[RMDB]
RNA sequence: GGGAACGACUCGAGUAGAGUCGAAAAAGCGCGCAUACUACGGUAUGCGCGCAAUCAGAAAUCGGGAAUGAUGUUCUCCCCUGGGAUUCCAAAACCGCUGUUUCGCUGAUGACCUCUGCUUUUUUAAUCACCACCGUUUGGUUCGCCAAACGGUGAACAUUUCAAUUCAGUUCGCUGAAUUGAAAUGAAAAGAAACAACAACAACAAC
Reactivity to 2A3 in 0.01 (KOAc 150mM, MgCl2 10mM, bicine 150mM(pH8.5), 24C), signal-to-noise 2, nucleotides 027 to 156: a000g020c000g000c010g040c020a020u000a010c000u030a020c140g070g000u000a000u000g020c000g070c000g030c000a000a000u030c000a000g090a010a090a020u100c040g000g000g040a070a150u050g050a070u060g070u140u000c020u040c020c010c010c030u090g040g030g040a080u100u080c060c000a000a040a070a030c020c030g000c080u060g020u030u070u030c030g000c030u020g040a050u070g020a060c020c030u020c000u020g030c070u170u040u070u020u040u210a110a100u130c050a020c070c000a000c000c000g000u000u000u010g020g020u030u040c080g000c070c000a000a000a000c000g000g000u000g000a000a000
Reactivity to DMS in 0.01 (KOAc 150mM, MgCl2 10mM, bicine 150mM(pH8.5), 24C), signal-to-noise 1, nucleotides 027 to 156: a100g000c020g050c030g050c000a020u000a000c000u000a120c300g060g020u000a010u000g000c000g030c000g000c000a000a010u000c060a160g000a040a060a080u010c070g010g000g010a130a100u030g020a100u020g000u000u020c060u000c020c010c020c050u020g000g060g000a130u000u010c000c040a050a070a110a090c060c050g010c030u010g010u000u000u000c040g020c080u010g020a100u000g010a130c050c000u000c060u010g020c030u000u000u000u000u010u000a000a150u030c030a120c080c000a020c010c000g040u010u000u010g000g040u000u030c300g010c020c000a000a040a000c000g020g000u000g000a000a050
An RNA of 207 nucleotides, treated with 2A3 and DMS and read out base by base. Conditions: 150 mM KOAc, 10 mM MgCl2 and 150 mM bicine (pH 8.5), 24 C. For DMS the reverse transcriptase was MarathonRT. The 2A3 profile rests on 1,278 reads. For DMS, 2,750 sequencing reads were counted.